[RMDB]
RNA sequence: GGGAACGACUCGAGUAGAGUCGAAAAGGGGUCAACGUACGUGGAGGAUUGAGAGGCUGAAGCCUCCACGGCUACCCACCUCAAUCUCCCCACCCACGUGACGUUGACGGAGGCACCCAAAGCAAUUCUCAGUGACUUCGGUCACUGAGAAUUGCAAGAUUAAUACUGACUUCGGUCAGUAUUAAUCAAAAGAAACAACAACAACAAC
Reactivity to DMS in 0.01 (KOAc 150mM, MgCl2 10mM, bicine 150mM(pH8.5), 24C), signal-to-noise 1, nucleotides 027 to 156: g000g030g000g090u010c030a050a030c010g030u010a020c020g050u000g000g000a200g020g000a090u010u010g000a260g020a080g020g020c050u010g000a300a090g030c000c040u010c060c120a100c240g020g020c020u000a080c120c080c070a260c040c000u000c000a000a080u000c030u010c300c000c000c070a300c110c000c000a020c000g000u000g000a080c070g010u000u000g000a070c040g010g020a080g000g020c040a130c000c000c000a110a120a150g040c000a020a010u010u000c000u000c000a000g000u000g020a050c050u000u030c300g050g020u000c030a020c010u010g010a010g010a020a000u000u000g000c000a040a020
Reactivity to 2A3 in 0.01 (KOAc 150mM, MgCl2 10mM, bicine 150mM(pH8.5), 24C), signal-to-noise 2, nucleotides 027 to 156: g070g020g000g010u010c000a000a010c010g010u020a000c000g000u000g000g030a030g010g020a000u020u020g010a010g030a040g050g060c080u110g060a110a050g010c040c020u090c150c200a060c080g000g000c020u060a060c020c020c040a060c000c010u000c000a010a010u000c070u080c070c040c020c000a030c020c020c000a000c010g010u080g080a040c010g000u010u000g010a000c010g000g020a020g000g040c060a040c020c020c000a050a090a000g000c000a000a000u010u000c000u000c000a000g010u000g000a010c020u060u120c300g070g000u020c000a000c000u000g000a000g000a000a000u000u000g000c000a000a000
Notes:
Chemical mapping of a 207-nucleotide RNA with DMS and 2A3. Values are in units of 0.01, from 0 to 300, in steps of 10. For 2A3 the reverse transcriptase was SuperScript II with manganese. The DMS profile rests on 1,909 reads. Conditions: 150 mM KOAc, 10 mM MgCl2 and 150 mM bicine (pH 8.5), 24 C. For DMS the reverse transcriptase was MarathonRT.